[RMDB]
An RNA of 207 nucleotides, treated with DMS and 2A3 and read out base by base. For 2A3, 2,368 sequencing reads were counted. For DMS the reverse transcriptase was MarathonRT. Conditions: 150 mM KOAc, 10 mM MgCl2 and 150 mM bicine (pH 8.5), 24 C. 2A3 adducts were read by reverse transcription with SuperScript II with manganese.

RNA sequence: GGGAACGACUCGAGUAGAGUCGAAAACCAGGUUGCCUAAGGAGGGGUGAACCGGCCCAGGUCGGAAACGGAGCAGGUCAAAACUCCCGUGCCGAUCAGUAGUGGGAUCGCGCCUGUGAAUAGUUGCUGCAGUCUAGCCUGGGCAAGAUAGUGAGACCAUCACCUAUAACUUCGGUUAUAGGUGAUGAAAAGAAACAACAACAACAAC
Reactivity to DMS in 0.01 (KOAc 150mM, MgCl2 10mM, bicine 150mM(pH8.5), 24C), signal-to-noise 2, nucleotides 027 to 156: c020c000a140g000g050u000u000g000c000c030u010a160a070g000g020a130g040g010g010g020u000g020a080a070c060c000g020g020c000c000c000a050g030g010u000c040g020g010a030a080a110c070g050g000a220g010c010a050g000g030u010c060a040a060a090a070c060u000c020c010c030g000u010g020c010c010g000a060u000c030a110g020u000a130g040u000g020g030g000a030u000c050g020c130g040c010c010u010g000u010g020a080a190u000a100g000u000u000g020c020u010g000c030a140g000u000c010u000a100g010c020c010u010g000g000g000c000a030a040g000a070u000a110g000u000g000a160g000a180c200
Reactivity to 2A3 in 0.01 (KOAc 150mM, MgCl2 10mM, bicine 150mM(pH8.5), 24C), signal-to-noise 3, nucleotides 027 to 156: c020c010a000g000g030u030u040g020c020c000u080a110a140g000g060a060g040g030g020g020u080g130a040a030c000c020g010g000c030c010c000a010g000g000u100c020g010g040a070a060a060c070g070g030a070g010c020a010g000g090u250c040a030a060a050a060c010u050c030c020c020g040u100g000c010c000g000a030u040c030a010g090u180a020g060u120g080g120g000a020u010c010g010c040g010c050c010u070g010u070g090a090a080u160a130g090u040u080g030c030u040g000c000a030g020u020c020u030a010g000c010c000u010g000g000g000c000a000a000g010a040u150a020g160u130g070a040g000a010c010